RNA sequence: GGGAACGACUCGAGUAGAGUCGAAAAGCAUGGGCGACGAAAAGCCAAUCUAAAGCGUUGUCUCCCUCGUUCCUCGCGCACGCGAUUUUGCGUUCUGCACAGGAAGCCGAAGUCGAACAAGAAGCAGCUUAGACCAAGGAUUCGUCCUUGGUCUAAGAAAAGAAACAACAACAACAAC
Reactivity to 2A3 in 0.01 (KOAc 150mM, MgCl2 10mM, bicine 150mM(pH8.5), 24C), signal-to-noise 3, nucleotides 027 to 126: g030c030a070u160g040g010g000c050g030a040c020g040a070a040a090a000g020c030c060a060a100u110c100u180a100a090a020g040c010g030u040u030g030u010c040u030c000c000c000u030c000g000u020u040c000c020u020c030g000c000g010c000a020c030g040c030g050a120u070u070u090u200g030c020g020u040u060c050u130g040c080a030c040a130g060g000a050a020g000c030c040g050a080a020g070u070c040g030a080a020c060a020a070g080a060a000g040c040a000g020
Reactivity to DMS in 0.01 (KOAc 150mM, MgCl2 10mM, bicine 150mM(pH8.5), 24C), signal-to-noise 4, nucleotides 027 to 126: g010c140a050u000g010g010g010c030g020a050c050g010a070a070a140a110g010c060c050a100a090u010c110u010a070a110a100g020c040g010u000u000g000u010c020u000c030c020c010u000c030g010u000u000c010c000u000c140g000c060g010c140a050c040g010c000g010a150u000u010u010u000g020c050g030u000u000c040u010g020c140a090c150a090g010g010a060a070g020c030c010g010a080a080g000u000c020g000a040a090c070a090a110g010a070a100g000c110a080g020
Source: RMDB library OK2TRN, as collected in RNAgym. Structure probing data (2A3 and DMS) for a 177-nucleotide construct. The DMS profile rests on 3,557 reads. For 2A3, 2,842 sequencing reads were counted.